[RMDB]
An RNA of 177 nucleotides, treated with DMS and 2A3 and read out base by base. Conditions: 150 mM KOAc, 10 mM MgCl2 and 150 mM bicine (pH 8.5), 24 C.
RNA sequence: GGGAACGACUCGAGUAGAGUCGAAAAUGUGUCAAAAUGUCCUUCCUUUUUAAGGCUGAAUGAUGUUCCAUUGCGUGUAUACAUUACAUUGUGCUUCUCCCUUCUUCUGUCAGUGGACAUUGGGUUCGCCCUUGACGGUAUUCGUACCGUCAAGGGCAAAAGAAACAACAACAACAAC
Reactivity to DMS in 0.01 (KOAc 150mM, MgCl2 10mM, bicine 150mM(pH8.5), 24C), signal-to-noise 2, nucleotides 027 to 126: u010g010u020g000u000c040a070a070a160a060u000g000u000c000c010u000u000c050c010u000u000u010u010u000a060a070g020g020c070u000g000a060a090u000g000a060u010g020u030u000c010c000a080u020u000g010c100g000u000g000u000a060u000a090c200a110u010u000a060c060a080u000u000g040u000g010c030u000u000c040u000c010c010c010u000u000c040u000u000c050u000g020u000c030a040g000u010g020g010a090c020a030u000u000g000g020g010u010u000c120
Reactivity to 2A3 in 0.01 (KOAc 150mM, MgCl2 10mM, bicine 150mM(pH8.5), 24C), signal-to-noise 2, nucleotides 027 to 126: u050g040u030g040u050c010a150a050a000a110u040g000u020c000c000u000u140c000c030u100u070u030u040u240a120a040g040g000c010u010g080a070a040u110g020a030u070g070u160u010c050c010a050u020u120g000c070g010u110g030u050a030u030a060c100a020u090u090a030c010a030u050u180g070u080g110c000u090u030c020u000c030c010c000u070u100c010u020u020c020u080g170u030c010a040g040u010g060g060a000c030a040u080u050g040g000g030u060u090c040
For 2A3 the reverse transcriptase was SuperScript II with manganese. For DMS the reverse transcriptase was MarathonRT.